[RMDB]
This 177-nucleotide RNA was probed chemically with DMS.
For DMS the reverse transcriptase was MarathonRT.
It was measured as part of the RMDB library TTRDES.
For DMS, 758 sequencing reads were counted.
The reactions ran in a buffer of 150 mM KOAc, 10 mM MgCl2 and 150 mM bicine (pH 8.5), at 24 C.
RNA sequence: GGGAACGACUCGAGUAGAGUCGAAAAAAAAGAUAUGGAGGCGAUAAGUAUACAAAGUGCAACAGCAGCGAUCGGAAACGAUCGCUGACAUGCACAAAAAGUACUUUUGACGCCUCCUAAGUCAAAACCAUAUACCCUGGUUCGCCAGGGUAUAUGGAAAAGAAACAACAACAACAAC
Reactivity to DMS in 0.01 (KOAc 150mM, MgCl2 10mM, bicine 150mM(pH8.5), 24C), signal-to-noise 1, nucleotides 027 to 126: a080a020a190a100g000a090u000a300u000g010g020a010g060g000c030g000a160u000a040a040g000u000a000u000a160c190a200a090a260g000u010g000c000a010a010c290a160g010c000a000g020c000g030a000u010c000g000g010a130a090a090c000g000a000u000c000g000c040u000g030a040c130a100u000g000c000a000c000a050a040a130a080a100g010u000a030c000u000u000u000u010g010a300c060g000c030c040u000c030c000u000a010a040g000u000c000a070a100a070a300